RNA sequence: GGGAACGACUCGAGUAGAGUCGAAAAUCUGAAGAGUUCGCUCUUCAGAAAAUACCGAGAGUCAACCUCGGUAGACUUGACUAACCCUUGGAAACAAGGGAAAAACGGAAUGGUUCGCCAUUCCGAAGACUAGGAUCAAGUUCGCUUGAUCCUAGUCAAAAGAAACAACAACAACAAC
Reactivity to DMS in 0.01 (KOAc 150mM, MgCl2 10mM, bicine 150mM(pH8.5), 24C), signal-to-noise 3, nucleotides 027 to 126: u000c010u000g000a000a000g010a010g030u010u020c300g020c000u000c010u000u020c010a060g000a010a060a110a060u000a020c000c000g000a010g010a130g010u030c170a070a120c110c000u000c020g010g010u010a010g000a110c140u030u000g000a170c130u030a070a150c020c000c000u010u000g000g000a140a100a160c010a000a000g000g000g020a000a000a070a110a160c030g020g010a000a000u000g010g020u000u010c300g000c010c000a010u000u000c000c000g020a080a020
Reactivity to 2A3 in 0.01 (KOAc 150mM, MgCl2 10mM, bicine 150mM(pH8.5), 24C), signal-to-noise 3, nucleotides 027 to 126: u010c000u000g000a000a000g010a010g010u050u130c170g050c070u010c000u010u010c010a000g000a030a020a000a000u020a000c000c000g020a000g000a000g170u170c070a090a060c010c000u000c000g000g000u010a010g020a040c040u080u230g060a040c020u060a090a140c000c000c000u010u000g000g020a030a050a030c000a000a010g010g020g020a080a030a020a010a000c000g000g000a000a010u000g020g040u040u060c240g010c070c000a000u000u010c000c000g000a040a020
The data come from the RNA Mapping Database (RMDB), library M2PK50. Structure probing data (DMS and 2A3) for a 177-nucleotide construct.